[RMDB]
RNA sequence: GGGAACGACUCGAGUAGAGUCGAAAAAUUGGUCGUAAUCCAGGAUAAAGACGUGCAUGGGACGGAGGCGUUUGGCCAAGACGUCCAAGGCCCAGGCAAACACGUUAUACAGGUCGCCGUUGGGGGCGCGCAUACGAAAAUUCGUUUUCGUAUGCGCAAAAGAAACAACAACAACAAC
Reactivity to DMS in 0.01 (KOAc 150mM, MgCl2 10mM, bicine 150mM(pH8.5), 24C), signal-to-noise 4, nucleotides 027 to 126: a130u010u000g000g000u000c040g000u000a070a110u010c020c010a090g000g000a130u050a050a070a120g000a040c030g010u000g020c030a110u010g000g000g000a030c040g000g030a290g010g010c010g000u000u020u010g000g000c110c120a040a030g000a010c020g010u000c010c020a110a200g010g010c000c010c020a000g000g020c080a090a100a120c050a040c000g020u000u010a070u020a100c130a090g000g010u010c020g010c010c000g000u000u010g000g000g000g010g020c110
Reactivity to 2A3 in 0.01 (KOAc 150mM, MgCl2 10mM, bicine 150mM(pH8.5), 24C), signal-to-noise 4, nucleotides 027 to 126: a000u050u050g020g000u010c040g080u100a040a040u020c020c040a050g090g000a050u100a110a190a020g050a010c040g020u050g010c030a110u060g020g020g040a040c070g120g060a100g020g020c020g000u040u090u110g050g000c030c020a030a010g010a000c000g020u000c010c030a010a010g080g050c000c000c000a000g020g020c060a030a130a020c030a000c040g040u050u030a050u070a090c050a030g010g080u050c000g010c030c020g030u110u180g030g000g010g020g000c030